[RMDB]
RNA sequence: GGGAACGACUCGAGUAGAGUCGAAAAGAUAUGGACCUUGAACUACACCUGCGAGGACGCUCGGAAACGAGCGUCUACCCACCGAAAGGUGCAAGGUCCUAAGUCAAAACGAGUGUUCGCACUCGAAGUUGUAUCAUGGGUUCGCCCAUGAUACAACAAAAGAAACAACAACAACAAC
Reactivity to DMS in 0.01 (KOAc 150mM, MgCl2 10mM, bicine 150mM(pH8.5), 24C), signal-to-noise 3, nucleotides 027 to 126: g020a020u010a200u010g000g030a000c010c000u000u000g000a110a030c110u020a300c030a000c000c000u010g010c090g030a210g010g010a010c000g030c000u000c000g000g000a060a020a080c000g010a000g050c010g010u000c010u000a020c060c100c080a300c160c090g010a060a090a030g000g010u000g000c000a020a010g000g000u000c000c000u000a000a040g000u000c030a120a030a090a120c040g010a030g010u010g020u000u010c250g010c000a010c010u010c010g000a050a080
Reactivity to 2A3 in 0.01 (KOAc 150mM, MgCl2 10mM, bicine 150mM(pH8.5), 24C), signal-to-noise 2, nucleotides 027 to 126: g010a020u030a010u060g000g010a000c000c000u010u010g050a100a070c110u220a050c300a010c010c040u150g130c110g040a040g060g000a000c000g000c000u010c020g000g000a010a040a010c010g010a010g010c000g000u000c000u000a000c010c000c020a120c060c090g300a300a300a060g000g010u000g000c000a000a000g000g010u000c000c000u000a010a000g000u000c010a030a010a080a160c020g010a000g020u020g040u110u160c270g000c120a010c000u000c010g030a080a000

Overview
Conditions: 150 mM KOAc, 10 mM MgCl2 and 150 mM bicine (pH 8.5), 24 C. This 177-nucleotide RNA was probed chemically with DMS and 2A3. Values cover nucleotides 27 to 126. Source: RMDB library TTRDEL, as collected in RNAgym.